[RMDB]
RNA sequence: GGGAACGACUCGAGUAGAGUCGAAAAGAAUUGGUAUGUAAGCUACUGCUUCCGGUAGCUGCGUCACACUUUAAGAGUGUGCAUACUGAGCCGAAGCUCAGCUUCGGUCCCCCAAGGGAAGAACAAACCGUCGCCUAUAGUUCGCUAUAGGCGACGGAAAAGAAACAACAACAACAAC
Reactivity to 2A3 in 0.01 (KOAc 150mM, MgCl2 10mM, bicine 150mM(pH8.5), 24C), signal-to-noise 1, nucleotides 027 to 126: g040a020a110u010u010g050g010u010a010u000g000u000a000a010g000c000u030a030c000u030g090c010u000u000c000c000g000g000u030a000g000c010u000g000c010g000u010c000a030c000a000c000u030u000u300a300a090g140a050g160u000g000u000g050c000a000u000a000c000u000g000a000g000c000c000g000a000a000g000c010u100c300a050g000c000u030u000c000g000g000u000c000c000c000c000c030a040a000g000g030g000a000a000g000a000a000c090a020a120a000